[RMDB]
RNA sequence: GGGAACGACUCGAGUAGAGUCGAAAAGUUUGACCUAGUCCUUUCCUUCUGCAUGUCAGCCUGUGCUGAAAGUUACAGCAGUCCCGUCAGGAAGGGGAUUGGCUUCUGUGAACCUACAGGUCCCCGUGGCACAGGAAGGUCUCAUGCCACAGCAAGAACUAGUAGUACCCUUCGGGGUACUACUAGUAAAAGAAACAACAACAACAAC
Reactivity to 2A3 in 0.01 (KOAc 150mM, MgCl2 10mM, bicine 150mM(pH8.5), 24C), signal-to-noise 4, nucleotides 027 to 156: g040u040u060u130g060a050c010c000u020a010g120u090c010c010u060u070u090c010c000u060u070c050u070g030c040a070u050g030u080c010a010g020c010c040u110g020u060g030c020u040g060a140a100a050g040u080u100a060c020a020g000c010a010g020u050c010c020c020g090u060c070a040g020g100a050a050g010g000g010g010a010u010u050g070g010c020u040u030c010u110g050u020g060a130a130c010c020u070a040c130a090g000g060u040c030c000c010c040g060u060g000g000c020a010c040a050g010g030a020a020g010g010u010c010u010c040a020u060g020c020c020a030c010a030g130c060a060a030g200a090
Reactivity to DMS in 0.01 (KOAc 150mM, MgCl2 10mM, bicine 150mM(pH8.5), 24C), signal-to-noise 3, nucleotides 027 to 156: g010u000u000u010g020a110c030c030u000a130g010u000c030c030u000u000u010c010c030u000u000c030u000g010c070a110u000g020u000c040a070g010c010c050u010g020u010g000c020u000g000a060a090a120g030u000u000a110c070a060g030c030a110g020u010c010c020c030g030u000c110a110g020g020a130a100g010g010g040g020a040u000u010g010g000c040u000u000c030u000g010u000g010a050a070c030c010u010a100c050a120g020g010u000c010c010c010c030g030u010g000g030c040a070c040a070g020g000a100a100g020g000u000c010u000c050a080u010g020c010c040a160c020a110g020c090a110a110g000a080